Annotation:
Source: RMDB library OK3TST, as collected in RNAgym. Structure probing data (DMS and 2A3) for a 207-nucleotide construct. The RNA was probed in 150 mM KOAc, 10 mM MgCl2 and 150 mM bicine (pH 8.5) at 24 C.
RNA sequence: GGGAACGACUCGAGUAGAGUCGAAAAAAAUGUGAUAUGGGGGUUGCGAUGUUAAACGGAUUAAUAUAUGUUAUAGGUGGAAUCGUUAAAGGUGACACGUGUACCGACGCACUAGAGAGUUUAUCAGAAGAUGGAUGGAUGAAGCAUCAACGUCUUCCUAGCAGUAUAGGUUCGCCUAUACUGCUAGAAAAGAAACAACAACAACAAC
Reactivity to DMS in 0.01 (KOAc 150mM, MgCl2 10mM, bicine 150mM(pH8.5), 24C), signal-to-noise 3, nucleotides 027 to 156: a070a050a040u000g020u010g010a110u010a060u000g000g000g020g030g030u000u000g060c020g020a110u010g030u010u000a030a100a150c050g010g000a190u000u000a040a120u010a140u010a060u010g000u000u000a110u000a060g020g020u000g020g010a070a080u000c040g000u000u010a070a060a140g010g020u000g010a100c060a040c090g030u000g020u000a130c050c000g000a090c070g030c020a070c050u010a090g040a180g020a180g010u000u000u000a070u000c060a120g010a050a070g020a050u000g000g020a090u000g010g010a140u000g010a090a100g030c050a080u000c050a050a090c040g010u010c010u000u000c020
Reactivity to 2A3 in 0.01 (KOAc 150mM, MgCl2 10mM, bicine 150mM(pH8.5), 24C), signal-to-noise 3, nucleotides 027 to 156: a000a000a000u190g020u040g010a070u070a100u150g030g000g000g000g010u010u010g010c000g010a040u030g020u060u120a040a090a000c020g000g040a020u060u080a110a040u080a030u010a020u130g020u070u050a060u050a100g010g010u010g030g030a060a090u070c030g010u050u130a150a080a030g040g010u010g020a010c000a000c110g040u040g020u030a020c020c040g050a010c030g000c010a020c030u030a010g020a000g000a000g100u030u030u110a070u080c020a020g020a060a000g020a030u060g040g010a020u030g050g000a030u090g040a040a000g040c010a000u060c030a020a050c030g040u010c020u040u030c000

About this RNA: The 2A3 profile rests on 2,313 reads.